[RMDB]
RNA sequence: GGGAACGACUCGAGUAGAGUCGAAAAGUGUAAAUAGAGGAGUCAGGGUUCGCACCCGCUCCGCGAACCUAGGGUAACACUGACUGUGGAGCGCAAGAGAUAGCGAGAGAGAACUCGCUAUCAGCAACGGGUGAGUACGUUUCGACGUACUCACCCGAAAAGAAACAACAACAACAAC
Reactivity to 2A3 in 0.01 (KOAc 150mM, MgCl2 10mM, bicine 150mM(pH8.5), 24C), signal-to-noise 1, nucleotides 027 to 126: g020u030g000u180a020a120a200u200a040g080a030g250g000a030g030u130c050a000g020g020g020u000u000c030g020c010a050c000c040c090g000c000u000c000c000g000c010g000a000a000c000c000u020a030g100g100g090u060a000a000c000a000c060u070g040a000c060u080g030u050g130g010a010g000c000g000c040a030a010g120a030g000a170u000a000g000c000g000a000g000a000g020a010g000a080a030c000u000c000g020c000u000a000u000c010a000g020c000a070a060
Reactivity to DMS in 0.01 (KOAc 150mM, MgCl2 10mM, bicine 150mM(pH8.5), 24C), signal-to-noise 1, nucleotides 027 to 126: g040u010g040u000a020a120a300u000a200g030a040g010g000a070g000u000c110a180g020g000g050u000u000c030g000c070a090c220c000c020g000c010u000c000c060g060c040g000a040a090c010c000u000a030g000g000g020u020a050a080c000a000c000u020g000a050c090u030g040u000g080g030a050g000c000g000c300a110a040g000a000g020a020u000a000g000c000g000a010g060a250g040a240g030a210a130c000u000c000g000c000u000a000u040c000a010g000c250a190a100
Structure probing data (2A3 and DMS) for a 177-nucleotide construct. It was measured as part of the RMDB library OK1LIB. Reactivities are given for positions 27 through 126. DMS adducts were read by reverse transcription with MarathonRT.